This 177-nucleotide RNA was probed chemically with 2A3.
For 2A3, 323 sequencing reads were counted.
Reactivities are given for positions 27 through 126.
The RNA was probed in 150 mM KOAc, 10 mM MgCl2 and 150 mM bicine (pH 8.5) at 24 C.
For 2A3 the reverse transcriptase was SuperScript II with manganese.
RNA sequence: GGGAACGACUCGAGUAGAGUCGAAAAGCUCAUUUUCAAUUUGCAGAACGUUGCUGUUAAUCUGUAGCCGCUUACCGUCUUUUUCCACACCAAUCCGUGCGUACUCCUCGGAAGGGGUUUUAAUCGCCACGGACUGACCUUUCGAGGUCAGUCCGUGAAAAGAAACAACAACAACAAC
Reactivity to 2A3 in 0.01 (KOAc 150mM, MgCl2 10mM, bicine 150mM(pH8.5), 24C), signal-to-noise 1, nucleotides 027 to 126: g000c000u000c020a100u030u030u090u000c150a090a050u030u070u300g100c070a070g000a040a000c130g010u000u120g000c020u000g000u080u000a300a070u060c070u040g180u070a000g010c020c040g020c020u000u000a000c000c000g070u050c070u090u040u000u000u000c000c000a000c020a000c090c020a000a080u030c020c060g160u000g000c000g030u000a040c010u010c080c000u000c000g030g030a120a200g040g120g000g090u040u130u000u180a110a080u090c000g000c020